[RMDB]
RNA sequence: GGGAACGACUCGAGUAGAGUCGAAAACAGUUUAAUCUCUGAAAGUGUUCUAAGGAACACAACAUUGAUUAAUCUCAUUUUUGGAUCUCGUGGCAAGGCCUCUGUGCUUGCGCAUGCCUUGCCACACCUUAUUUCGUCGGUUCGCCGACGAAAUAAGAAAAGAAACAACAACAACAAC
Reactivity to DMS in 0.01 (KOAc 150mM, MgCl2 10mM, bicine 150mM(pH8.5), 24C), signal-to-noise 1, nucleotides 027 to 126: c300a030g000u010u000u000a000a010u000c000u010c020u010g000a080a150a160g000u000g000u000u000c000u020a140a140g030g010a020a000c000a000c010a010a300c010a000u000u010g000a010u000u000a000a000u000c000u040c110a160u000u010u000u000u000g010g010a110u000c040u000c060g010u010g000g020c000a020a000g000g020c000c010u000c010u000g010u000g010c010u000u000g000c000g030c000a010u010g000c000c000u000u000g000c000c000a010c000a000c210
Reactivity to 2A3 in 0.01 (KOAc 150mM, MgCl2 10mM, bicine 150mM(pH8.5), 24C), signal-to-noise 1, nucleotides 027 to 126: c010a000g000u000u000u000a010a000u010c000u000c010u010g040a110a110a100g050u000g000u000u000c020u060a160a270g190g000a010a010c010a000c000a020a000c000a000u020u000g000a000u000u010a000a010u010c040u040c120a130u090u170u070u130u140g160g000a100u020c030u010c120g030u010g000g000c000a000a000g000g010c010c020u000c000u010g010u000g010c050u150u080g040c000g040c020a020u200g010c020c030u000u000g020c000c000a010c000a000c000